Structure probing data (DMS and 2A3) for a 207-nucleotide construct. 2A3 adducts were read by reverse transcription with SuperScript II with manganese. The 2A3 profile rests on 703 reads. The data come from the RNA Mapping Database (RMDB), library OK3TST. For DMS, 2,207 sequencing reads were counted.
RNA sequence: GGGAACGACUCGAGUAGAGUCGAAAAGAUCUUUUUGGGAAUGCCAUGAGAUUCCAAAUUCAUGCAUUUGAUUCUUUUUAAAAAUGCAUGAAUGCUCACAUUUGUUCAGAGUCUUGCAUCCAGUUUCAGAAAGUGUUCUUGGCACUCAGCACAGGAGAAACUUACCACAGUUCGCUGUGGUAAGUUUAAAAGAAACAACAACAACAAC
Reactivity to DMS in 0.01 (KOAc 150mM, MgCl2 10mM, bicine 150mM(pH8.5), 24C), signal-to-noise 1, nucleotides 027 to 156: g000a120u000c000u000u000u000u010u000g000g010g000a060a050u000g000c020c140a150u010g010a100g010a050u010u000c080c080a090a160a100u010u000c000a000u000g020c020a020u000u000u000g000a180u000u000c080u020u040u000u030u000a010a120a020a030a010u000g000c010a020u000g010a020a000u000g000c050u000c050a090c050a120u000u000u000g060u000u000c080a110g000a140g000u000c030u000u010g020c040a090u000c040c010a180g000u000u000u000c000a100g010a070a050a120g010u000g000u000u020c050u000u000g030g030c020a050c040u000c030a120g020c100a130c040a080g030g010a270g000
Reactivity to 2A3 in 0.01 (KOAc 150mM, MgCl2 10mM, bicine 150mM(pH8.5), 24C), signal-to-noise 2, nucleotides 027 to 156: g030a010u070c000u010u130u080u060u050g090g000g020a300a020u070g110c050c040a040u060g050a000g010a030u070u090c050c040a140a160a120u000u000c000a000u020g000c000a000u000u000u060g030a060u050u150c050u160u150u060u050u080a090a130a020a000a000u000g020c000a000u010g000a000a000u020g000c010u030c020a050c020a080u020u060u160g110u100u040c090a020g020a030g020u010c010u080u040g000c030a020u050c030c000a070g010u020u050u120c050a050g090a060a060a010g040u020g020u070u060c040u030u020g060g010c040a030c050u090c070a040g080c000a000c020a040g070g030a050g050